Overview:
An RNA of 177 nucleotides, treated with DMS and 2A3 and read out base by base.
[RMDB]
RNA sequence: GGGAACGACUCGAGUAGAGUCGAAAAUGCUUCAAGGCGUCACAACUGGUACCAGUCCAAAGAGUCCCAGUCUGAUCGCUAUGUAGGAGGGACUGUGGCGUCGCAGUGGUAUCGGCGCGACCGAAUAGGCAGCGUACUGCUUCGGCAGUAUGCUGCCAAAAGAAACAACAACAACAAC
Reactivity to DMS in 0.01 (KOAc 150mM, MgCl2 10mM, bicine 150mM(pH8.5), 24C), signal-to-noise 1, nucleotides 027 to 126: u020g010c020u000u010c040a130a210g000g010c030g040u000c040a000c220a110a000c040u020g000g050u000a060c060c020a050g030u020c060c130a050a080a160g000a040g010u000c000c000c000a100g000u010c080u000g000a080u000c030g070c070u000a010u020g060u000a130g000g000a020g000g010g000a040c000u000g010u040g000g000c000g000u000c020g020c050a020g020u010g020g000u010a020u000c000g000g010c030g000c180g000a200c000c040g040a110a010u050a100
Reactivity to 2A3 in 0.01 (KOAc 150mM, MgCl2 10mM, bicine 150mM(pH8.5), 24C), signal-to-noise 3, nucleotides 027 to 126: u160g010c010u040u110c040a070a140g040g040c010g000u020c050a000c030a010a000c010u000g000g000u000a000c000c000a000g010u000c000c000a000a000a010g020a000g000u010c000c000c000a030g060u000c010u000g100a210u140c040g010c150u150a100u300g120u100a050g050g030a030g010g040g040a020c010u030g000u020g020g030c010g110u020c010g000c000a000g000u130g000g050u030a050u050c050g030g000c020g000c020g120a210c050c000g050a110a070u140a070

Overview
Reactivities are given for positions 27 through 126. The 2A3 profile rests on 2,261 reads. For 2A3 the reverse transcriptase was SuperScript II with manganese. DMS (dimethyl sulfate) methylates the pairing face of unpaired adenines and cytosines. The DMS profile rests on 2,011 reads.